[RMDB]
This 177-nucleotide RNA was probed chemically with DMS and 2A3. For 2A3 the reverse transcriptase was SuperScript II with manganese. The DMS profile rests on 5,048 reads. The RNA was probed in 150 mM KOAc, 10 mM MgCl2 and 150 mM bicine (pH 8.5) at 24 C. The 2A3 profile rests on 2,955 reads. For DMS the reverse transcriptase was MarathonRT.
RNA sequence: GGGAACGACUCGAGUAGAGUCGAAAAGGUCGAAGAACUUGAACAGGGGCUGCAAAAUUACGCCCGUGUUUUACAACAGCAAACUGAAAUUAAUGUCUGCCAGAUGGCGGGCGGCGGCGCUGCGGGCCUAAGUAAUGGUCUUCGGACCAUUACUUAGAAAAGAAACAACAACAACAAC
Reactivity to DMS in 0.01 (KOAc 150mM, MgCl2 10mM, bicine 150mM(pH8.5), 24C), signal-to-noise 5, nucleotides 027 to 126: g020g020u010c020g020a130a080g010a090a110c120u000u010g000a040a050c030a070g020g000g000g000c020u010g020c120a070a070a120a120u010u010a120c140g010c000c000c000g010u010g000u000u000u000u010a070c120a060a110c100a040g000c070a050a060a080c070u000g000a060a080a130u010u010a050a100u010g010u000c020u000g010c010c030a230g010a120u000g010g020c030g010g010g010c030g010g010c050g010g000c060g000c030u010g010c020g010g000g000c130
Reactivity to 2A3 in 0.01 (KOAc 150mM, MgCl2 10mM, bicine 150mM(pH8.5), 24C), signal-to-noise 3, nucleotides 027 to 126: g030g010u030c030g020a050a010g020a140a070c060u110u120g000a030a000c020a030g020g000g010g020c010u070g000c050a050a090a030a280u180u070a050c050g010c000c000c030g030u000g010u000u020u010u020a040c030a080a010c020a020g040c030a050a040a070c050u130g040a120a040a090u160u110a080a100u170g010u030c000u010g010c020c000a080g050a300u220g070g030c020g000g000g010c020g010g000c010g010g000c030g010c010u020g000c010g010g000g040c000